[RMDB]
The record gives the reactivity of an RNA of 170 nucleotides to 2A3 and DMS. DMS adducts were read by reverse transcription with MarathonRT. It was measured as part of the RMDB library 15KLIB. The RNA was probed in 150 mM KOAc, 10 mM MgCl2 and 150 mM bicine (pH 8.5) at 24 C. The 2A3 profile rests on 7,078 reads.
RNA sequence: GGGAACGACUCGAGUAGAGUCGAAAAGAAUAGAACCCCGGGGGGUGAUCCACCAGGAGAUGAACGGAAAAAUCACCUCCAGAGGACCCCUUCAGCGAACAGAAGAGACUCCCCUCGAUAGGAGCAAAAAGAAGGUUGUUCGCAACCUUCAAAAGAAACAACAACAACAAC
Reactivity to 2A3 in 0.01 (KOAc 150mM, MgCl2 10mM, bicine 150mM(pH8.5), 24C), signal-to-noise 4, nucleotides 027 to 129: g010a040a040u090a050g120a080a070c000c000c000c010g000g010g010g000g060g000u040g020a160u000c000c020a060c040c030a100g070g040a080g010a050u140g040a130a020c110g020g040a080a020a020a050a020u040c010a020c020c000u000c000c000a000g040a050g020g010a030c010c020c000c000u010u040c030a020g000c010g030a010a010c010a050g110a150a010g030a020g020a060c000u010c000c000c010c010u040c010g020a060u070a110g030g020a040g030c080a010a040a030a020a000
Reactivity to DMS in 0.01 (KOAc 150mM, MgCl2 10mM, bicine 150mM(pH8.5), 24C), signal-to-noise 4, nucleotides 027 to 129: g010a130a150u030a130g000a150a160c090c030c000c080g000g040g050g010g020g040u000g000a070u030c010c020a170c070c130a160g000g000a040g030a000u060g030a020a020c070g020g050a030a080a090a130a030u000c040a000c000c030u040c050c020a070g030a190g000g000a080c100c090c030c070u000u000c040a090g020c050g090a040a010c000a020g040a070a050g030a150g020a080c020u000c000c040c000c080u020c100g020a140u030a070g040g010a020g020c040a020a040a100a110a090